[RMDB]
RNA sequence: GGGAACGACUCGAGUAGAGUCGAAAAUUACCGCCCAGGAUGGGGUGCAGCGUUCCUGCAAUAUCCAGGGCACCUAGGUGCAGCCUUGUAGUUUUAGUGAACUUUAGGCUAAAGAAUUUCACUAGCAAAAAUCUUUAAGGGUUCGCCCUUAAAGAAAUCGAUAAUUCAAGUUCGCUUGAAUUAUCGAAAAAGAAACAACAACAACAAC
Reactivity to DMS in 0.01 (KOAc 150mM, MgCl2 10mM, bicine 150mM(pH8.5), 24C), signal-to-noise 1, nucleotides 027 to 156: u020u010a050c010c050g000c000c000c030a070g000g000a070u000g030g020g020g010u000g000c010a070g020c130g010u010u020c110c020u000g090c030a050a110u000a030u010c040c000a130g000g050g060c010a030c040c040u000a070g020g010u010g010c060a090g010c010c040u000u020g020u010a070g000u000u000u000u000a110g040u000g000a050a080c020u000u000u000a080g030g030c070u010a040a110a100g010a090a070u000u020u000c040a040c020u000a100g030c080a030a100a160a080a140u000c000u000u000u000a010a000g010g000g050u000u000c300g040c000c010c000u010u000a000a000a000g000a040a090a080
Reactivity to 2A3 in 0.01 (KOAc 150mM, MgCl2 10mM, bicine 150mM(pH8.5), 24C), signal-to-noise 3, nucleotides 027 to 156: u080u020a040c010c030g020c000c000c000a000g000g020a010u020g030g010g020g180u040g020c000a000g000c010g090u130u130c000c000u000g000c010a010a010u040a000u090c010c020a010g000g000g000c000a040c000c010u040a040g090g000u070g050c040a010g050c030c000u040u050g090u110a070g020u030u010u100u040a080g030u060g030a000a010c010u050u070u010a010g000g040c020u050a060a060a020g040a030a070u070u190u160c030a030c010u070a010g020c040a050a040a040a180a270u020c000u000u000u000a000a000g000g010g030u010u030c090g080c010c020c000u000u000a000a000a000g000a000a000a000
Conditions: 150 mM KOAc, 10 mM MgCl2 and 150 mM bicine (pH 8.5), 24 C. Chemical mapping of a 207-nucleotide RNA with DMS and 2A3. DMS adducts were read by reverse transcription with MarathonRT. For 2A3 the reverse transcriptase was SuperScript II with manganese.